The record gives the reactivity of an RNA of 177 nucleotides to DMS and 2A3. The RNA was probed in 150 mM KOAc, 10 mM MgCl2 and 150 mM bicine (pH 8.5) at 24 C. For DMS the reverse transcriptase was MarathonRT. It was measured as part of the RMDB library OK1LIB. 2A3 adducts were read by reverse transcription with SuperScript II with manganese. The 2A3 profile rests on 17,037 reads.
RNA sequence: GGGAACGACUCGAGUAGAGUCGAAAAGAUGAGGUUAAGAACUAGAGAGAACUUGAGACGCGUGAUGAAGCUCAAGAGAAAACGCGAGAGUGAGCAAGUGUGCUAGACGAAGCACACAAGAGGAAGAACUAUUUAAUUACUUCGGUAAUUAAAUAGUAAAAGAAACAACAACAACAAC
Reactivity to DMS in 0.01 (KOAc 150mM, MgCl2 10mM, bicine 150mM(pH8.5), 24C), signal-to-noise 9, nucleotides 027 to 126: g000a070u020g000a050g010g010u000u010a050a050g010a060a040c090u010a080g010a110g010a090g000a090a160c040u000u010g000a050g000a090c070g000c080g010u030g010a120u030g010a110a120g000c020u010c040a030a050g000a110g000a070a050a080a050c100g000c080g000a060g010a080g010u010g000a060g000c070a090a100g000u000g010u000g000c000u000a070g020a120c300g010a070a050g000c010a010c000a000c010a040a060g000a090g000g010a080a110g010a090
Reactivity to 2A3 in 0.01 (KOAc 150mM, MgCl2 10mM, bicine 150mM(pH8.5), 24C), signal-to-noise 9, nucleotides 027 to 126: g090a050u110g020a020g070g020u070u100a080a020g040a070a030c050u080a060g010a000g000a000g010a160a030c010u010u040g010a010g020a050c030g040c040g090u120g050a140u130g070a110a020g000c010u010c020a020a000g050a000g040a050a090a020a020c080g000c040g020a030g000a000g080u080g020a020g020c040a100a110g010u000g000u010g010c000u010a020g020a100c100g130a160a000g000c000a000c000a000c000a010a010g070a010g040g050a030a040g010a030